[RMDB]
The record gives the reactivity of an RNA of 177 nucleotides to DMS. Source: RMDB library TTRDEL, as collected in RNAgym. The RNA was probed in 150 mM KOAc, 10 mM MgCl2 and 150 mM bicine (pH 8.5) at 24 C. In probing experiments dimethyl sulfate is read out at A N1 and C N3, which are open when not base-paired.

RNA sequence: GGGAACGACUCGAGUAGAGUCGAAAAGAUAUGGAGCUGGCAGCGAGGUACAGCAAUUCGGAAACGAAGCUGUACUACCCACCGCUGUGAGCUCCUAAGUCGUCAGAUAAUCCUUCGGGAUUAUCAACCAACAUAACCACUUCGGUGGUUAUGUUGGAAAAGAAACAACAACAACAAC
Reactivity to DMS in 0.01 (KOAc 150mM, MgCl2 10mM, bicine 150mM(pH8.5), 24C), signal-to-noise 2, nucleotides 027 to 126: g000a040u000a250u000g000g000a040g040c010u000g000g010c000a030g000c000g000a050g020g020u000a000c000a010g010c030a180a150u000u000c000g000g010a040a010a120c000g020a050a070g010c000u000g000u000a000c020u000a040c090c080c100a300c230c000g000c020u010g010u000g000a000g000c000u000c000c000u000a000a080g000u000c020g000u000c140a080g000a000u000a000a010u000c000c000u000u020c220g030g000g000a000u000u000a010u010c010a090a200